Notes: The record gives the reactivity of an RNA of 177 nucleotides to 2A3. The data come from the RNA Mapping Database (RMDB), library OK1LIB. The RNA was probed in 150 mM KOAc, 10 mM MgCl2 and 150 mM bicine (pH 8.5) at 24 C.
[RMDB]
RNA sequence: GGGAACGACUCGAGUAGAGUCGAAAAGCACAUUCACAGGGCCCAAGGCAGGUGCAGCUGCAGCAGGAGGCAGAGCCGCUGAAGCAGGUGCAGCCACAGGUGCAGCCCCAGGCACAUUCACAGCCCCGGGUCGGUGAAGAUUCGUCUUCACCGACCCAAAAGAAACAACAACAACAAC
Reactivity to 2A3 in 0.01 (KOAc 150mM, MgCl2 10mM, bicine 150mM(pH8.5), 24C), signal-to-noise 1, nucleotides 027 to 126: g090c030a000c010a010u100u160c020a010c090a070g000g000g090c000c050c000a060a050g070g030c050a070g000g080u010g050c010a020g010c000u010g000c000a040g000c000a010g000g090a040g020g000c010a010g050a030g090c010c000g000c000u030g090a040a000g000c010a020g000g170u030g010c010a000g080c060c040a090c050a010g240g030u020g030c010a010g010c040c040c000c000a000g020g000c010a060c000a040u130u070c050a030c010a080g020c020c030c000c020